[RMDB]
An RNA of 207 nucleotides, treated with DMS and 2A3 and read out base by base.
RNA sequence: GGGAACGACUCGAGUAGAGUCGAAAAACUCGGAUUGGAUUCCAGAAUGACUCUCCAACAAUGGAAGACUCAACAUGUGUCUCCUGUGGACAUUGUGCAACAGUCUGUCCAACCGGGUCACUUGUAGAGAAAGGAAUUGAGGAUGCAACGACAAUUCCACAUCAUAUUAGUUCGCUAAUAUGAUGUGAAAAGAAACAACAACAACAAC
Reactivity to DMS in 0.01 (KOAc 150mM, MgCl2 10mM, bicine 150mM(pH8.5), 24C), signal-to-noise 5, nucleotides 027 to 156: a040c010u000c020g010g010a120u000u000g010g010a170u000u000c060c050a190g010a100a090u000g020a090c040u000c050u000c030c020a060a100c090a180a180u000g000g010a300a060g010a040c010u000c010a140a080c030a030u020g010u010g010u000c000u000c070c100u000g020u000g010g010a030c000a050u000u000g070u010g000c060a100a150c180a060g020u000c040u010g010u000c000c020a030a090c010c020g010g000g010u000c020a050c050u000u010g030u010a090g010a100g010a110a060a100g020g010a080a040u000u000g010a180g020g010a130u010g010c060a080a100c030g010a150c050a080a170u000u000c010
Reactivity to 2A3 in 0.01 (KOAc 150mM, MgCl2 10mM, bicine 150mM(pH8.5), 24C), signal-to-noise 9, nucleotides 027 to 156: a000c030u030c020g080g060a240u020u040g050g020a050u180u070c080c020a040g080a060a080u120g080a150c020u030c000u000c070c020a110a130c060a130a210u160g020g010a100a050g010a040c010u030c070a060a130c050a190u190g020u010g010u010c010u030c050c040u060g030u110g030g000a010c030a060u110u210g030u090g060c070a140a060c010a080g080u010c020u030g050u000c000c000a010a030c010c010g010g000g000u010c010a020c020u030u040g060u090a050g010a010g030a130a070a020g040g010a030a040u030u050g010a050g060g040a060u130g060c050a080a040c050g110a030c030a030a050u070u050c020

2A3 adducts were read by reverse transcription with SuperScript II with manganese. The DMS profile rests on 9,838 reads.